[RMDB]
RNA sequence: GGGAACGACUCGAGUAGAGUCGAAAAUCAUGCUAUCACCAGCUAACUGUGUCUCCUACAGUUAGUGGUGAGCGAGAGUUCACCUAGUGUCAUUGUAGGAGACGAUGACGCUAUGGUGAUAGCAUGCCUAGUCCAUACUAUUCGUAGUAUGGACUAGAAAAGAAACAACAACAACAAC
Reactivity to 2A3 in 0.01 (KOAc 150mM, MgCl2 10mM, bicine 150mM(pH8.5), 24C), signal-to-noise 4, nucleotides 027 to 126: u110c000a000u000g000c000u000a000u000c000a000c000c000a000g000c000u000a020a020c010u010g010u010g070u080c030u010c010c040u050a000c000a000g000u000u010a010g010u010g010g000u000g000a000g000c010g010a090g000a000g000u000u000c000a000c000c000u010a010g020u000g030u050c010a010u000u010g030u040a130g000g300a010g000a010c000g000a000u000g000a000c010g000c010u030a030u070g000g030u000g000a000u000a000g000c000a000u000g000c000
Reactivity to DMS in 0.01 (KOAc 150mM, MgCl2 10mM, bicine 150mM(pH8.5), 24C), signal-to-noise 8, nucleotides 027 to 126: u020c020a000u000g010c000u000a000u000c000a010c010c000a020g010c010u000a040a070c050u000g010u000g010u000c100u010c140c070u000a110c000a010g000u000u000a030g010u000g010g010u000g000a010g010c000g010a240g000a250g010u000u000c000a000c000c000u000a040g010u000g000u000c070a020u000u000g010u000a230g020g010a010g010a090c010g000a010u000g000a080c080g010c010u000a030u000g010g010u000g010a000u000a000g010c000a000u000g000c300